Structure probing data (2A3 and DMS) for a 177-nucleotide construct. 2A3 adducts were read by reverse transcription with SuperScript II with manganese. It was measured as part of the RMDB library OK2TRN. Values cover nucleotides 27 to 126. For DMS, 2,093 sequencing reads were counted.

RNA sequence: GGGAACGACUCGAGUAGAGUCGAAAAGCACGGAGACAUGCACGGAAACGUUGACGGAGGCCCCAUGACGAACGUGGCUGUCCGAGGCCUACGUAUUUGACUGGUAAUUCAGUCGUUAGGACAGCUAGAUCAGCACUGCAUUCGUGCAGUGCUGAUCAAAAGAAACAACAACAACAAC
Reactivity to 2A3 in 0.01 (KOAc 150mM, MgCl2 10mM, bicine 150mM(pH8.5), 24C), signal-to-noise 2, nucleotides 027 to 126: g030c030a010c070g020g010a030g010a020c090a050u060g030c030a020c070g020g000a020a050a010c030g020u020u200g020a040c050g020g000a040g040g030c030c010c040c020a070u060g090a050c070g020a170a010c050g010u040g020g010c000u010g010u000c000c010g010a030g010g000c000c020u020a040c020g100u060a160u080u060u180g010a000c010u010g090g010u090a060a070u080u100c010a000g010u000c010g030u030u080a010g000g030a010c000a010g000c000u000a010
Reactivity to DMS in 0.01 (KOAc 150mM, MgCl2 10mM, bicine 150mM(pH8.5), 24C), signal-to-noise 2, nucleotides 027 to 126: g000c040a060c020g000g010a090g000a050c080a070u030g000c020a030c070g020g000a090a100a100c080g030u010u000g030a100c030g020g000a060g000g020c020c010c010c050a150u000g010a100c100g000a070a130c150g010u010g000g010c010u010g030u000c000c030g010a080g010g000c030c010u010a030c030g030u000a070u010u030u010g010a010c000u000g000g010u000a120a130u000u030c020a010g000u010c000g010u010u000a100g040g010a030c020a010g010c020u010a070